The data come from the RNA Mapping Database (RMDB), libraries RFM100 and RFMREP. An RNA of 177 nucleotides, treated with DMS and 2A3 and read out base by base. Reactivities are given for positions 27 through 126. For DMS the reverse transcriptase was MarathonRT. The reactions ran in a buffer of 150 mM KOAc, 10 mM MgCl2 and 150 mM bicine (pH 8.5), at 24 C. 2A3 adducts were read by reverse transcription with SuperScript II with manganese.
RNA sequence: GGGAACGACUCGAGUAGAGUCGAAAAUGCUUUCAAGGUCAUUUCUUUAGGGAACCCCAUUCCCAUAAAUUCAGUAUCCAAAGCUGGUUGUUGUAUCUAUGGGAAAGGGUUCCCUAACGAAAUGAUCCGAUUUACGUUCUUUCGAGAACGUAAAUCGAAAAGAAACAACAACAACAAC
Reactivity to DMS in 0.01 (KOAc 150mM, MgCl2 10mM, bicine 150mM(pH8.5), 24C), signal-to-noise 2, nucleotides 027 to 126: u030g010c090u000u020u000c080a110a150g020g000u000c000a010u000u000u000c000u000u010u000a010g000g000g010a000a000c020c000c000c090a170u000u000c000c000c000a010u000a000a020a000u000u000c000a010g000u000a010u000c010c030a030a180a200g030c190u010g000g010u010u000g030u000u000g010u000a020u010c020u000a020u000g000g000g000a000a040a280g000g010g010u000u000c000c000c000u000a010a010c000g000a000a000a000u000g010a000u000c000
Reactivity to 2A3 in 0.01 (KOAc 150mM, MgCl2 10mM, bicine 150mM(pH8.5), 24C), signal-to-noise 3, nucleotides 027 to 126: u080g020c060u040u050u090c050a090a050g000g000u000c000a000u010u000u000c010u000u000u000a000g000g000g000a010a000c000c000c000c070a280u050u000c020c000c000a010u010a000a020a000u030u040c010a000g020u010a040u010c020c010a070a160a170g150c290u080g030g000u020u020g010u010u000g000u000a010u000c010u000a000u000g000g000g000a010a010a010g000g000g000u000u000c000c000c000u000a000a000c000g000a000a000a000u000g000a000u000c000